[RMDB]
RNA sequence: GGGAACGACUCGAGUAGAGUCGAAAAUCAGGGACCCUGGGGCCUCCAUCCCACUGGCUGGAUAGUGUGUGCAGUCAGUUGGAGAGCAGAAACUACAAUAUUUUCUGAAAUGUGGUAAUAUCAAGAUAUAAGAGGCACAUAUACGUGAUGACUAAUACUCCCGGUAUAGUUUCGACUAUACCGGGAGAAAAGAAACAACAACAACAAC
Reactivity to 2A3 in 0.01 (KOAc 150mM, MgCl2 10mM, bicine 150mM(pH8.5), 24C), signal-to-noise 1, nucleotides 027 to 156: u100c050a040g090g000g000a030c000c030c000u030g000g040g160g010c010c000u000c000c000a080u010c000c000c000a000c010u000g010g110c000u000g020g070a130u060a210g150u230g030u090g040u090g070c000a000g000u000c000a000g000u010u040g040g000a120g000a050g080c000a000g040a060a060a040c010u080a000c010a050a060u040a170u150u050u030u150c050u050g200a180a100a130u070g020u050g050g020u030a010a010u030a020u120c070a070a030g060a070u100a000u020a170a110g010a040g020g080c000a000c000a010u170a000u050a010c030g040u030g010a060u030g000a100c050u080a000a080u050a300

Notes: Conditions: 150 mM KOAc, 10 mM MgCl2 and 150 mM bicine (pH 8.5), 24 C. This 207-nucleotide RNA was probed chemically with 2A3. The 2A3 profile rests on 427 reads.